[RMDB]
RNA sequence: GGGAACGACUCGAGUAGAGUCGAAAAGAUCUGCGCCGAUCCGAAACGCUAGCAAACAGCCCGCAUCAUGUCGUCUCCUGACUUCGACGUGGUGAAAUACUGAGCUUAUGCGAGUAAGCCUGUUAGCAAUAGAUCAGAACGUUCGCGUUCUGAUCAACACAUCGCCUAAGUUCGCUUAGGCGAUGUGAAAAGAAACAACAACAACAAC
Reactivity to DMS in 0.01 (KOAc 150mM, MgCl2 10mM, bicine 150mM(pH8.5), 24C), signal-to-noise 2, nucleotides 027 to 156: g000a080u010c020u000g030c050g010c060c040g000a080u000c030c020g020a140a070a080c090g040c010u000a050g000c020a070a080a150c140a120g000c010c020c070g040c040a070u000c020a040u030g000u010c010g030u010c090u000c060c110u030g030a110c060u010u010c030g030a030c030g080u000g000g010u010g010a080a050a120u010a090c050u000g010a100g020c040u000u000a130u000g000c120g000a190g050u000a090a060g010c030c060u010g030u000u010a060g000c070a080a160u010a090g000a020u000c000a000g000a000a030c010g000u000u010c290g000c010g030u000u000c000u010g000a000u000c010a010a120
Reactivity to 2A3 in 0.01 (KOAc 150mM, MgCl2 10mM, bicine 150mM(pH8.5), 24C), signal-to-noise 5, nucleotides 027 to 156: g030a040u000c010u070g050c050g020c050c040g040a050u040c030c040g060a070a080a020c040g000c040u040a020g000c020a020a030a140c060a070g030c010c010c020g010c000a000u010c000a000u020g020u010c000g030u000c040u080c080c090u160g110a160c030u040u040c050g000a000c000g010u010g010g020u040g030a020a030a010u180a030c050u030g030a030g020c000u040u010a030u090g050c020g030a040g070u010a010a010g010c000c010u040g020u060u060a020g020c030a070a140u060a190g000a000u000c000a000g000a000a000c000g020u070u070c230g010c010g100u000u000c010u000g000a000u000c000a000a000
Structure probing data (DMS and 2A3) for a 207-nucleotide construct. Reactivities are rounded to 0.1 and cut off at 0 and 3. For DMS, 3,713 sequencing reads were counted. Source: RMDB library M2RFPK, as collected in RNAgym. The RNA was probed in 150 mM KOAc, 10 mM MgCl2 and 150 mM bicine (pH 8.5) at 24 C.